[RMDB]
RNA sequence: GGGAACGACUCGAGUAGAGUCGAAAAUGUCCAGUCCCUCCCCGCUCCUGGAGAAGGGAGACUCGGGAACGCCUAGCAUCUGAGGGACAAAGCCGCCCCCGGGCGCUCCCCUCGGAGAUCCACUGGGAAACAUACCGCUUCGGCGGUAUGAAAAGAAACAACAACAACAAC
Reactivity to 2A3 in 0.01 (KOAc 150mM, MgCl2 10mM, bicine 150mM(pH8.5), 24C), signal-to-noise 3, nucleotides 027 to 129: u110g040u000c020c000a000g020u000c000c000c000u020c000c010c000c000g030c010u000c000c030u080g100g060a140g050a100a090g070g040g000a010g000a020c010u020c080g010g020g040a060a020c030g010c010c010u030a030g030c010a090u020c020u030g010a030g010g020g000a030c030a040a060a000g040c100c060g010c010c000c000c020c020g040g000g000c040g020c010u020c010c000c000c000u000c010g020g000a030g010a020u040c030c010a060c100u030g000g030g000a000a060a020
Reactivity to DMS in 0.01 (KOAc 150mM, MgCl2 10mM, bicine 150mM(pH8.5), 24C), signal-to-noise 9, nucleotides 027 to 129: u060g020u030c030c040a000g030u020c030c030c010u010c010c010c020c080g020c000u020c010c030u000g020g010a150g040a090a120g020g020g010a070g020a170c080u030c100g000g000g000a100a060c200g050c030c010u000a070g020c160a080u020c020u040g000a040g000g000g000a060c060a090a090a090g000c050c030g020c020c020c000c100c180g040g050g000c010g020c070u030c030c000c010c000u010c000g020g020a050g000a040u050c040c080a130c080u020g000g030g020a120a090a150

This 170-nucleotide RNA was probed chemically with 2A3 and DMS. The RNA was probed in 150 mM KOAc, 10 mM MgCl2 and 150 mM bicine (pH 8.5) at 24 C. The data come from the RNA Mapping Database (RMDB), library 15KLIB. In probing experiments dimethyl sulfate is read out at A N1 and C N3, which are open when not base-paired.